[RMDB]
RNA sequence: GGGAACGACUCGAGUAGAGUCGAAAAAAAUACACUGAACACCAGAUCACAUCAACUUGGGUAACUUUAUGUAAAAGAGUUAUUGACUUGUAAAUGUGACCCUUUAAAGGCUUCAUACAGAUCCCAACCUCUUUAGCCUAAGGUCUAGAUUGUGUUAGUACUAUCCACCGUUCGCGGUGGAUAGUACAAAAGAAACAACAACAACAAC
Reactivity to 2A3 in 0.01 (KOAc 150mM, MgCl2 10mM, bicine 150mM(pH8.5), 24C), signal-to-noise 1, nucleotides 027 to 156: a000a000a000u240a030c060a000c020u100g030a140a000c000a010c020c070a020g020a150u000c000a010c000a010u000c010a000a180c020u060u060g020g000g050u030a010a000c000u070u130u180a110u300g130u170a000a220a050a030g010a040g010u020u010a060u000u030g120a070c000u000u040g000u020a000a090a180u060g010u000g020a010c030c040c010u040u050u080a120a160a020g020g000c000u040u100c070a070u060a110c030a030g050a140u070c050c020c000a000a080c030c030u140c000u100u050u040a000g010c000c020u000a020a030g020g000u000c030u050a150g050a180u020u090g030u000g020u010u060a010
Chemical mapping of a 207-nucleotide RNA with 2A3. Conditions: 150 mM KOAc, 10 mM MgCl2 and 150 mM bicine (pH 8.5), 24 C. Source: RMDB library OK3TST, as collected in RNAgym.